The record gives the reactivity of an RNA of 177 nucleotides to 2A3 and DMS.
DMS adducts were read by reverse transcription with MarathonRT.
The reactions ran in a buffer of 150 mM KOAc, 10 mM MgCl2 and 150 mM bicine (pH 8.5), at 24 C.
Source: RMDB library OK2TST, as collected in RNAgym.
Values cover nucleotides 27 to 126.
2A3 adducts were read by reverse transcription with SuperScript II with manganese.
[RMDB]
RNA sequence: GGGAACGACUCGAGUAGAGUCGAAAAUCGAUCAAGUCGAGCGUCGGCUGGCGGCCGGUGAGCUGAGCUGCCCGUCUUGCGGGGGUGUGCUGGCGGGCUGGGGCCGGGCUCGGUCGCGGCAGUUACGUCCCACGUAAAAUUUCGAUUUUACGUGGGAAAAAGAAACAACAACAACAAC
Reactivity to 2A3 in 0.01 (KOAc 150mM, MgCl2 10mM, bicine 150mM(pH8.5), 24C), signal-to-noise 1, nucleotides 027 to 126: u130c020g020a020u050c060a090a050g040u020c010g020a000g000c030g230u120c020g070g040c020u050g170g190c020g020g010c040c030g090g100u100g080a020g020c030u090g080a010g030c000u160g140c010c020c010g100u030c080u130u260g010c040g010g030g010g040g050u140g040u080g050c000u020g060g000c000g040g000g000c010u040g010g000g050g000c000c000g030g000g000c010u020c020g000g000u060c010g000c000g000g060c020a050g020u070u090a050c060g030
Reactivity to DMS in 0.01 (KOAc 150mM, MgCl2 10mM, bicine 150mM(pH8.5), 24C), signal-to-noise 3, nucleotides 027 to 126: u010c040g020a090u010c070a090a220g010u000c010g000a040g010c020g010u010c030g020g020c000u000g030g020c020g020g020c010c000g010g040u010g000a090g010c010u010g000a160g010c010u000g000c020c000c000g000u010c090u010u010g020c110g010g010g000g010g020u010g010u000g000c020u000g000g030c000g020g000g000c010u000g000g010g020g000c010c020g000g000g000c010u000c020g010g000u010c020g010c120g010g020c070a100g000u000u010a100c150g000